[RMDB]
RNA sequence: GGGAACGACUCGAGUAGAGUCGAAAAAGCAUUGAUGUGGUGCCGUUGCUGGAUAUACGCCAGUCGACUGUAUUUCAUCGUGACGAUACUGGGUAUUGGUUUGGUUUUCGUCCCCACGUCUGCGCCGCAACAAAACCUUUUUCGAAAGGUUUUGUUGAAAAGAAACAACAACAACAAC
Reactivity to DMS in 0.01 (KOAc 150mM, MgCl2 10mM, bicine 150mM(pH8.5), 24C), signal-to-noise 8, nucleotides 027 to 126: a100g010c020a050u010u010g010a020u000g030u000g010g010u000g000c080c030g010u000u000g010c010u000g010g010a050u000a070u000a050c120g000c000c010a010g000u000c020g010a070c040u000g010u000a080u000u010u010c190a090u000c070g010u010g010a100c040g010a100u000a050c030u000g000g010g000u000a040u000u010g030g020u000u000u000g000g000u000u000u010u000c020g010u000c010c070c000c020a030c050g010u000c010u000g010c030g010c040c040g010
Reactivity to 2A3 in 0.01 (KOAc 150mM, MgCl2 10mM, bicine 150mM(pH8.5), 24C), signal-to-noise 7, nucleotides 027 to 126: a010g050c050a060u110u250g000a000u010g010u010g010g010u010g020c020c000g010u010u010g000c010u020g020g000a010u030a010u020a120c160g090c020c000a010g010u040c020g020a030c020u050g040u140a140u050u240u130c080a120u110c080g080u050g030a030c020g030a020u040a110c020u030g000g020g030u050a070u080u130g160g020u060u060u070g050g000u130u300u070u080c000g000u000c020c000c000c000a000c000g020u010c010u030g020c040g020c020c020g000

Structure probing data (DMS and 2A3) for a 177-nucleotide construct. For 2A3 the reverse transcriptase was SuperScript II with manganese. The 2A3 profile rests on 13,232 reads. Conditions: 150 mM KOAc, 10 mM MgCl2 and 150 mM bicine (pH 8.5), 24 C. For DMS, 25,776 sequencing reads were counted. It was measured as part of the RMDB library OK2TST.